[RMDB]
RNA sequence: GGGAACGACUCGAGUAGAGUCGAAAAGAUAUGGAUUGCAUUCAAGCGAUAAGGAUCACUUCGGAAACGAAGUGAAUCCUUUUGACGCUUGGUGCAAUCCUAAGUCAAACGCACCUUCGGGUGCGAACCACACUGAUUCGUUCGCGAAUCAGUGUGGAAAAGAAACAACAACAACAAC
Reactivity to DMS in 0.01 (KOAc 150mM, MgCl2 10mM, bicine 150mM(pH8.5), 24C), signal-to-noise 1, nucleotides 027 to 126: g010a030u020a300u000g000g030a010u010u010g000c000a000u000u000c000a000a000g020c000g050a300u000a020a000g000g000a020u000c000a010c000u010u030c000g000g000a050a180a240c000g000a000a010g020u010g010a000a030u000c000c000u000u000u010u000g020a170c130g030c000u010u000g000g010u000g000c000a020a000u010c020c000u010a020a090g000u010c030a110a210a270c020g000c000a030c000c000u000u040c300g000g000g010u020g000c000g000a000a140
Reactivity to 2A3 in 0.01 (KOAc 150mM, MgCl2 10mM, bicine 150mM(pH8.5), 24C), signal-to-noise 1, nucleotides 027 to 126: g050a030u080a040u100g000g000a010u000u020g020c020a000u180u300c010a030a010g000c030g080a090u070a210a070g030g000a010u010c000a000c010u010u010c020g000g000a070a080a010c000g000a000a000g000u000g000a000a020u010c000c000u000u000u000u040g080a090c070g020c010u000u020g000g000u000g000c000a000a000u000c000c000u000a000a000g000u000c010a060a020a200c050g000c000a000c000c000u020u160c300g240g000g000u000g000c010g000a030a020